Conditions: 150 mM KOAc, 10 mM MgCl2 and 150 mM bicine (pH 8.5), 24 C. Chemical mapping of a 177-nucleotide RNA with 2A3 and DMS. DMS adducts were read by reverse transcription with MarathonRT. 2A3 adducts were read by reverse transcription with SuperScript II with manganese. The data come from the RNA Mapping Database (RMDB), libraries RFM100 and RFMREP.
RNA sequence: GGGAACGACUCGAGUAGAGUCGAAAACGGAUCCGGGUCCGGGACCCAUCUCGAGUUGGAGUCAAAGCUUUGUGCUUGUCUGGCGCUCGGAUUCUGUCUCCUUCGGCUCUCCAGAGUCGGAGCUCUCUCUACCUUAGGGAUUCGUCCCUAAGGUAGAAAAAGAAACAACAACAACAAC
Reactivity to 2A3 in 0.01 (KOAc 150mM, MgCl2 10mM, bicine 150mM(pH8.5), 24C), signal-to-noise 9, nucleotides 027 to 126: c010g010g000a000u000c000c000g010g000g010u000c000c010g010g010g020a030c010c010c010a030u040c100u100c130g300a300g120u030u030g040g050a170g030u040c060a050a030a010g000c030u120u230u300g160u300g030c000u050u040g030u060c020u010g020g000c100g000c060u000c000g000g000a010u050u010c030u060g030u010c070u080c030c000u000u010c000g000g000c000u000c000u010c030c040a040g000a000g000u000c000g000g000a010g020c010u000c000u000c000
Reactivity to DMS in 0.01 (KOAc 150mM, MgCl2 10mM, bicine 150mM(pH8.5), 24C), signal-to-noise 3, nucleotides 027 to 126: c030g010g010a010u000c000c000g030g030g020u000c020c000g000g020g020a040c010c020c000a020u010c040u040c200g010a090g010u000u000g000g000a120g020u020c060a040a000a010g010c000u010u050u060g020u050g000c010u000u000g000u030c010u000g000g010c260g010c000u010c010g000g000a010u010u020c000u040g000u020c070u020c220c070u000u020c010g000g010c010u000c000u000c090c220a270g000a010g000u000c000g010g000a080g010c070u000c010u020c100